[RMDB]
RNA sequence: GGGAACGACUCGAGUAGAGUCGAAAAGAUAUGGAUCGACACGAAUCGACAAUUACUAUUGAACUACGAACAGUAUCGGAAACGAUACGUUCGCAAUAGUAAUUGUCGACUAUGUCGAUCCUAAGUCCCCGUAUCUAGUGUUCGCACUAGAUACGGGAAAAGAAACAACAACAACAAC
Reactivity to DMS in 0.01 (KOAc 150mM, MgCl2 10mM, bicine 150mM(pH8.5), 24C), signal-to-noise 2, nucleotides 027 to 126: g020a090u000a260u000g000g010a000u010c010g010a050c000a010c190g030a060a100u000c000g010a030c000a000a000u000u000a010c020u000a000u000u000g010a120a130c220u010a300c030g020a010a040c000a200g050u000a010u010c000g000g010a160a090a270c000g000a000u000a000c000g000u000u000c000g000c000a010a000u000a030g000u010a040a020u020u020g000u000c000g020a000c070u000a220u000g000u000c000g020a000u000c000c000u000a010a150g000u000c040
Reactivity to 2A3 in 0.01 (KOAc 150mM, MgCl2 10mM, bicine 150mM(pH8.5), 24C), signal-to-noise 2, nucleotides 027 to 126: g060a040u170a090u270g010g020a010u000c020g000a000c030a010c050g260a120a300u000c000g010a000c000a030a030u020u000a010c010u010a020u040u010g060a190a110c210u210a110c300g000a030a000c120a250g020u000a000u000c000g000g030a120a080a090c020g010a010u010a000c010g000u020u000c000g010c000a010a010u000a010g040u000a000a000u020u000g000u020c000g010a000c000u010a000u000g000u000c010g000a010u000c000c000u000a000a010g010u060c030
The data come from the RNA Mapping Database (RMDB), library TTRINS. Structure probing data (DMS and 2A3) for a 177-nucleotide construct. Reactivities are rounded to 0.1 and cut off at 0 and 3. For 2A3, 3,421 sequencing reads were counted. Values cover nucleotides 27 to 126. For 2A3 the reverse transcriptase was SuperScript II with manganese. Conditions: 150 mM KOAc, 10 mM MgCl2 and 150 mM bicine (pH 8.5), 24 C. The DMS profile rests on 1,267 reads.